[RMDB]
RNA sequence: GGGAACGACUCGAGUAGAGUCGAAAAACGUGUCCAGCUACGCGCUGCGGGCCGCAAUGACCGCGAGGAGUUCUUGGACAGGGAACUGUCGCCCGUGGCGCUGGGACGCGCUACGAUGAACUACGUGUCGUCUGUGGGCCUGUUGCCUGACGUGCUGUCGAUGAGAUAACUUCGGUUAUCUCAUCGAAAAAGAAACAACAACAACAAC
Reactivity to DMS in 0.01 (KOAc 150mM, MgCl2 10mM, bicine 150mM(pH8.5), 24C), signal-to-noise 1, nucleotides 027 to 156: a010c010g010u000g010u030c040c020a160g070c110u000a140c110g050c040g000c000u040g000c100g000g010g060c040c060g010c040a110a020u000g000a300c010c010g030c040g020a210g000g000a280g000u000u000c060u000u010g020g010a120c030a060g000g000g060a110a020c020u010g080u000c300g020c020c000c000g000u000g000g020c020g000c010u000g020g040g000a040c030g080c020g020c000u000a100c070g100a040u000g000a230a100c000u000a030c040g010u000g000u000c040g020u000c030u000g020u000g000g040g000c000c030u000g000u000u010g020c040c020u040g010a130c100g010u000g020c120u030g000
Reactivity to 2A3 in 0.01 (KOAc 150mM, MgCl2 10mM, bicine 150mM(pH8.5), 24C), signal-to-noise 1, nucleotides 027 to 156: a010c000g010u010g000u000c000c020a060g130c220u170a030c090g000c000g010c010u010g020c020g000g010g000c020c000g010c000a030a070u080g060a080c010c030g030c040g060a050g060g030a240g060u300u190c010u080u060g040g090a200c220a300g080g000g000a020a010c010u000g010u080c030g000c000c000c010g000u000g000g000c000g020c020u000g010g000g000a000c000g000c000g010c030u030a060c010g000a000u140g010a060a040c000u230a230c080g000u040g010u020c050g040u050c050u070g080u170g030g000g000c010c040u190g090u130u110g050c020c010u050g110a110c060g030u090g030c060u040g000